Structure probing data (2A3) for a 207-nucleotide construct. The reactions ran in a buffer of 150 mM KOAc, 10 mM MgCl2 and 150 mM bicine (pH 8.5), at 24 C.

RNA sequence: GGGAACGACUCGAGUAGAGUCGAAAAGGCUAGGUGGUAUUCCGGUGUGGGAUACUUGGUCAUAUGUAACGCUAAUUGCAUAAGAUUGUAGGACGGAAUUUACAGUCUUGGUUUUUAUAAACCUGAAAAAAGGAAUUACACUUCGGUGUAAUUCCAAGUAGUAUCUUGCCUUCGGGCAAGAUACUACAAAAGAAACAACAACAACAAC
Reactivity to 2A3 in 0.01 (KOAc 150mM, MgCl2 10mM, bicine 150mM(pH8.5), 24C), signal-to-noise 2, nucleotides 027 to 156: g010g000c040u030a010g010g160u000g030g020u070a000u040u040c030c030g180g050u220g030u120g100g000g040a050u050a060c000u020u070g000g000u040c010a030u020a030u060g030u030a050a010c060g030c170u060a060a050u150u060g010c020a030u020a080a050g030a030u010u050g090u050a030g060g070a030c080g030g020a030a020u090u080u000a020c000a010g000u010c000u030u080g030g000u070u070u020u040u000a180u090a040a090a010c020c000u020g150a000a020a060a000a070a050g000g000a000a020u000u000a020c020a000c010u060u100c240g030g000u000g000u000a000a000u000u000c000c000a000a000